This 177-nucleotide RNA was probed chemically with DMS and 2A3.
[RMDB]
RNA sequence: GGGAACGACUCGAGUAGAGUCGAAAAGUCCUCUACUCGCCGCAACACGUCGCGCGGCUGGAAAAGGCAGGCCAAUUCCCCAAGCGGGUACAGCUGGGCCCGAACAGAGUGGGAUGGGUUGAGGACGCUAAAAGAAUAUUUUCGAAUAUUCUUUUAGAAAAGAAACAACAACAACAAC
Reactivity to DMS in 0.01 (KOAc 150mM, MgCl2 10mM, bicine 150mM(pH8.5), 24C), signal-to-noise 9, nucleotides 027 to 126: g010u010c030c000u000c020u000a040c020u010c060g000c010c000g010c020a090a130c100a100c140g010u020c110g010c160g000c010g000g010c010u000g010g000a060a050a190a090g000g000c060a300g000g010c020c010a070a230u020u020c000c000c000c040a120a130g010c080g000g010g010u000a080c220a150g010c060u010g020g000g000c000c000c010g010a130a140c100a060g010a170g020u020g010g010g000a050u000g000g000g010u000u000g000a020g000g010a030c050g000
Reactivity to 2A3 in 0.01 (KOAc 150mM, MgCl2 10mM, bicine 150mM(pH8.5), 24C), signal-to-noise 9, nucleotides 027 to 126: g010u010c010c000u000c010u020a010c010u020c030g010c010c010g030c020a100a050c060a050c130g220u190c020g040c020g000c010g120g000c010u020g010g020a070a140a050a050g060g000c030a020g020g010c010c010a020a030u120u080c010c000c000c000a120a050g050c130g060g000g000u060a130c030a040g030c030u110g030g200g000c010c010c000g020a070a030c030a030g080a020g060u210g010g040g030a080u080g020g000g000u000u030g000a010g000g010a010c000g000

Background: The RNA was probed in 150 mM KOAc, 10 mM MgCl2 and 150 mM bicine (pH 8.5) at 24 C.